[RMDB]
RNA sequence: GGGAACGACUCGAGUAGAGUCGAAAAGCUGCCGGGGAUUUCCGCAGCAGAGGCGGCGAGUAUGCUGCAAAAAACCGACAAGCUAAUUAUGAGCGUACCUGAAGUGGCGCGGGUAUUUGGCAAAACCACCCUGAAACUGAUUCGUCAGUUUCAGGGUAAAAGAAACAACAACAACAAC
Reactivity to DMS in 0.01 (KOAc 150mM, MgCl2 10mM, bicine 150mM(pH8.5), 24C), signal-to-noise 2, nucleotides 027 to 126: g000c030u010g050c080c020g010g020g010g000a300u010u030u000c140c140g020c010a010g010c010a070g000a150g010g000c020g030g000c090g010a110g000u010a140u010g010c020u000g000c010a000a000a040a050a100a110c040c000g020a040c070a080a150g000c030u000a040a050u000u000a060u000g000a220g000c030g020u010a040c010c040u000g000a110a050g010u000g000g020c030g010c030g020g030g010u000a030u000u010u000g020g000c050a080a050a060a190c130c100
Reactivity to 2A3 in 0.01 (KOAc 150mM, MgCl2 10mM, bicine 150mM(pH8.5), 24C), signal-to-noise 1, nucleotides 027 to 126: g000c000u000g130c120c060g000g000g040g140a090u120u110u080c070c060g010c030a000g000c010a010g000a030g030g060c000g000g030c010g000a010g000u000a040u300g000c030u000g000c000a200a000a000a050a000a000c060c030g020a040c070a240a010g000c000u040a090a050u210u040a080u130g070a030g020c010g000u030a180c020c000u090g100a180a050g030u090g110g020c020g040c070g010g040g000u010a070u070u030u070g070g000c020a000a030a100a070c060c040
Conditions: 150 mM KOAc, 10 mM MgCl2 and 150 mM bicine (pH 8.5), 24 C. This 177-nucleotide RNA was probed chemically with DMS and 2A3. For DMS the reverse transcriptase was MarathonRT. For 2A3 the reverse transcriptase was SuperScript II with manganese. Reactivities are given for positions 27 through 126. It was measured as part of the RMDB library OK2TRN.